[RMDB]
RNA sequence: GGGAACGACUCGAGUAGAGUCGAAAAUAUGCAACGAUGCCCAGCAGCCAUUCCAGUUGGGUGAUUUGUACCAUUAGGGCACUGCAUCUUACCUUACGGAACUUAAUUUUUUCUGCUAUAGUUCACACGAAUGGUGUUGAUUCGUCAACACCAUUCGAAAAGAAACAACAACAACAAC
Reactivity to 2A3 in 0.01 (KOAc 150mM, MgCl2 10mM, bicine 150mM(pH8.5), 24C), signal-to-noise 4, nucleotides 027 to 126: u100a020u040g040c020a040a080c070g110a130u050g040c000c000c000a020g010c000a020g020c020c010a080u230u070c040c040a060g130u130u150g040g030g060u020g030a080u040u060u150g010u050a070c040c040a070u060u160a110g000g000g000c030a010c040u010g000c000a010u000c020u060u030a070c000c000u030u070a090c070g040g030a000a020c010u060u080a120a170u110u120u090u040u060u060c050u060g030c010u080a050u080a170g030u000u020c030a010c010a000
Reactivity to DMS in 0.01 (KOAc 150mM, MgCl2 10mM, bicine 150mM(pH8.5), 24C), signal-to-noise 3, nucleotides 027 to 126: u000a060u000g000c030a040a110c150g010a160u000g000c000c010c010a070g000c050a030g010c090c090a110u010u010c070c050a170g000u000u000g010g010g010u000g000a060u000u010u000g040u000a080c130c140a130u010u000a110g010g010g010c070a050c050u010g010c020a020u000c090u000u000a100c030c030u000u000a080c200g010g000a020a010c090u000u000a050a020u000u000u010u000u010u010c050u000g000c140u020a070u000a060g000u000u000c040a070c170a230